[RMDB]
RNA sequence: GGGAACGACUCGAGUAGAGUCGAAAAUCCUAAGUCUGACGACAAUGCGAGGGUAAACGAGAUCUUCGGAAACGAAGAUCGAUGAGUUUACCUCCCCACCGCAUUGCGUCAGAUAUGGAAAAAUCACGCAUAGUGGCUUCGGCCACUAUGCGUGAAAGUAUGUCAUUGACUUCGGUCAAUGACAUACAAAAGAAACAACAACAACAAC
Reactivity to DMS in 0.01 (KOAc 150mM, MgCl2 10mM, bicine 150mM(pH8.5), 24C), signal-to-noise 1, nucleotides 027 to 156: u000c020c000u000a000a210g010u000c000u010g000a030c030g010a270c000a000a010u000g010c010g000a300g040g000g000u000a030a010a020c010g000a260g010a000u000c010u010u000c010g000g010a260a080a250c020g010a010a000g010a000u010c000g000a050u020g020a260g000u000u000u000a010c000c000u000c300c040c020c040a300c070c020g010c010a000u000u000g000c000g030u020c010a000g020a000u010a080u050g000g000a020a060a130a190a080u000c000a000c000g030c000a000u010a010g020u000g010g000c000u000u000c300g050g000c000c000a040c000u000a000u000g000c000g030u000g000a000a020a100